[RMDB]
The record gives the reactivity of an RNA of 177 nucleotides to DMS and 2A3. Conditions: 150 mM KOAc, 10 mM MgCl2 and 150 mM bicine (pH 8.5), 24 C. For DMS, 5,015 sequencing reads were counted.

RNA sequence: GGGAACGACUCGAGUAGAGUCGAAAAGAUAUGGAGGUACCAUACAGCGAAGAACACUCUCGGAAACGAGAGUGGGAGCUGUGGUGACCUCCUAAGUCAAAACGCGUCGUGGUUCGCCACGACGCGAGUUGUAGAGAUUCUUCGGAAUCUCUACAACAAAAGAAACAACAACAACAAC
Reactivity to DMS in 0.01 (KOAc 150mM, MgCl2 10mM, bicine 150mM(pH8.5), 24C), signal-to-noise 4, nucleotides 027 to 126: g000a020u000a110u020g010g000a020g010g030u000a030c020c020a080u010a240c260a060g030c000g010a090a200g010a160a220c010a000c000u010c000u010c010g010g000a030a020a040c000g010a020g020a010g010u000g000g000g000a020g020c000u000g030u000g010g020u000g020a030c000c000u010c000c000u000a000a050g000u000c000a090a100a130a240c020g000c000g030u000c010g030u020g010g020u000u010c300g010c000c010a010c030g000a010c020g010c000g000a000
Reactivity to 2A3 in 0.01 (KOAc 150mM, MgCl2 10mM, bicine 150mM(pH8.5), 24C), signal-to-noise 4, nucleotides 027 to 126: g000a010u010a020u090g000g000a010g010g020u020a000c010c010a020u100a250c270a070g020c010g260a300a010g000a020a010c000a000c000u000c000u000c000g000g020a010a010a000c010g000a010g000a000g000u000g000g000g000a000g000c080u100g010u030g030g010u100g160a060c000c000u000c000c000u000a000a000g000u000c000a000a040a090a140c030g000c010g000u000c000g000u040g050g080u100u100c300g050c120c010a000c040g000a000c000g000c000g000a010